[RMDB]
RNA sequence: GGGAACGACUCGAGUAGAGUCGAAAACGGUCAAUUCCCCGCCCUUGUGGACUGCGAUCAAGUCUCUACUGCGUUGACCCGGUCCUUUCGGCACCGGAUUCCUCAGCCCCCAGCCCCCCGGGGUCGUCUCUCUAGAUUAAUUCGUUAAUCUAGAGAGAAAAGAAACAACAACAACAAC
Reactivity to 2A3 in 0.01 (KOAc 150mM, MgCl2 10mM, bicine 150mM(pH8.5), 24C), signal-to-noise 9, nucleotides 027 to 126: c030g020g030u060c030a050a080u070u050c010c000c000c000g010c000c010c000u050u080g040u060g060g040a070c020u030g020c040g060a080u060c060a060a040g060u000c010u010c010u070a090c030u040g050c030g080u060u070g050a070c010c010c000g000g020u030c010c000u070u160u180c110g020g000c040a010c010c010g020g010a050u040u040c000c010u040c010a020g010c000c000c000c010c010a010g000c000c000c000c010c010c020g000g000g020g000u020c020g020u000
Reactivity to DMS in 0.01 (KOAc 150mM, MgCl2 10mM, bicine 150mM(pH8.5), 24C), signal-to-noise 5, nucleotides 027 to 126: c100g020g000u000c050a100a200u010u000c010c000c010c120g010c040c020c030u000u000g000u000g000g010a070c040u010g010c080g000a100u000c060a080a110g010u000c010u010c040u010a070c040u020g000c090g000u000u010g000a110c130c020c010g000g020u000c010c030u010u020u020c120g000g030c130a030c020c020g010g010a210u010u010c040c010u010c060a100g000c030c010c010c010c050a170g010c040c010c000c020c010c060g020g000g030g010u010c060g000u010